[RMDB]
RNA sequence: GGGAACGACUCGAGUAGAGUCGAAAAAGCAGCGCCUUCACCCGUGCCACCAGCUCGGCCAGCACGAACGGUUUCACCAGGUAAUCGUCGGCGCCGGCCUCCAAUCCGGCCACUCGGUCAUCGACAGCAUCUACUUCAUGUUCGCAUGAAGUAGAUGAAAAGAAACAACAACAACAAC
Reactivity to DMS in 0.01 (KOAc 150mM, MgCl2 10mM, bicine 150mM(pH8.5), 24C), signal-to-noise 5, nucleotides 027 to 126: a100g010c060a090g010c070g020c040c030u000u010c070a120c070c020c050g010u000g020c040c030a070c070c060a080g010c060u010c090g010g000c040c040a060g010c030a060c040g010a060a040c070g020g010u000u000u000c040a120c140c090a080g030g010u010a040a040u000c030g010u000c020g010g030c130g010c020c030g010g010c050c020u000c100c090a090a130u000c070c040g000g000c010c040a060c060u000c020g000g010u000c030a060u000c040g010a140c110a110g000
Reactivity to 2A3 in 0.01 (KOAc 150mM, MgCl2 10mM, bicine 150mM(pH8.5), 24C), signal-to-noise 3, nucleotides 027 to 126: a010g070c040a020g020c020g030c020c000u080u060c050a030c020c020c010g010u040g020c020c000a060c020c010a020g010c030u050c020g020g020c010c010a020g020c020a020c060g080a200a020c020g000g050u030u080u060c070a100c060c020a040g000g120u060a040a050u050c040g020u010c020g010g050c060g000c010c010g000g000c000c010u040c030c000a020a070u050c030c000g020g010c010c000a040c020u040c040g030g020u040c020a070u080c050g060a040c020a030g060